[RMDB]
RNA sequence: GGGAACGACUCGAGUAGAGUCGAAAAGAUAUGGAUGGCCGAGCGAUAAGAGGCAUUCGGAAACGAAUGUCCUCUUUUGACGCUCGGUCCUAAGUCAAAUCUGGAAGGCGUUCGCGCCUUCCAGAAAGAGUGUUGAGUGGUUCGCCACUCAACACUCAAAAGAAACAACAACAACAAC
Reactivity to DMS in 0.01 (KOAc 150mM, MgCl2 10mM, bicine 150mM(pH8.5), 24C), signal-to-noise 1, nucleotides 027 to 126: g000a100u040a120u000g000g010a180u000g010g000c000c000g000a010g000c000g000a120u000a010a000g000a010g000g000c000a020u000u000c010g020g000a110a140a100c000g010a010a000u010g000u010c010c010u000c000u000u000u010u000g020a180c050g000c000u000c010g010g000u010c000c030u000a100a260g000u000c060a050a190a120u000c000u000g010g000a010a030g010g040c020g020u010u000c260g060c010g020c010c000u000u000c000c000a000g010a000a080a050